[RMDB]
RNA sequence: GGGAACGACUCGAGUAGAGUCGAAAAUACAAUCAUAGAUCACUGUAAUCUCCAACUUCUUCUGGGUUCUAGUGAUCCUCCUGCUUCAGACUCCUGAGUAGCUAGGACUACAGGCAAGAACCUCCACGCGUACGUGAGGGUUCGCCCUCACGUACGCAAAAGAAACAACAACAACAAC
Reactivity to 2A3 in 0.01 (KOAc 150mM, MgCl2 10mM, bicine 150mM(pH8.5), 24C), signal-to-noise 3, nucleotides 027 to 126: u140a020c090a050a020u070c060a090u220a160g050a020u040c010a010c060u090g050u160a060a060u090c120u000c070c020a050a140c000u110u060c020u060u050c050u150g020g000g000u000u040c010u010a040g050u030g030a010u010c030c030u040c000c030u030g040c010u050u120c040a100g030a190c060u020c040c000u050g000a020g020u090a000g030c000u000a000g020g000a000c000u180a090c040a030g000g000c020a040a090g000a020a030c000c030u020c050c010a100c140
This 177-nucleotide RNA was probed chemically with 2A3. Conditions: 150 mM KOAc, 10 mM MgCl2 and 150 mM bicine (pH 8.5), 24 C. The data come from the RNA Mapping Database (RMDB), library OK1LIB. Values are in units of 0.01, from 0 to 300, in steps of 10.